About this RNA: Structure probing data (2A3) for a 207-nucleotide construct. Values cover nucleotides 27 to 156. The RNA was probed in 150 mM KOAc, 10 mM MgCl2 and 150 mM bicine (pH 8.5) at 24 C. For 2A3, 1,369 sequencing reads were counted.
RNA sequence: GGGAACGACUCGAGUAGAGUCGAAAAACCUUUGUGUAUAGUCACGUGUAGGGAGAUCCGCCCGGUCCCAUUGGGACCGUAACGGAUCGAGGAUCUACACGAAGUCUAUACACUCUGGUAAAAGUGAACCGAUGAGGUUCGCCUCAUCGGUUCACAACUGACUUUAAGGGUUCGCCCUUAAAGUCAGAAAAGAAACAACAACAACAAC
Reactivity to 2A3 in 0.01 (KOAc 150mM, MgCl2 10mM, bicine 150mM(pH8.5), 24C), signal-to-noise 1, nucleotides 027 to 156: a000c010c000u020u000u010g030u000g000u010a010u010a000g030u010c010a010c020g000u000g010u010a010g000g010g000a010g000a010u000c010c020g060c020c040c000g010g000u040c030c010c060a150u260u300g000g000g020a020c000c030g000u010a070a030c000g010g010a010u000c000g000a010g000g000a010u010c000u010a000c010a000c000g000a060a020g000u010c000u000a000u000a000c010a000c000u000c010u000g000g010u060a110a150a060a040g000u000g010a000a000c000c000g000a000u010g030a000g080g060u020u030c160g110c000c000u000c000a000u030c030g000g000u000u000c000a000c000a010a000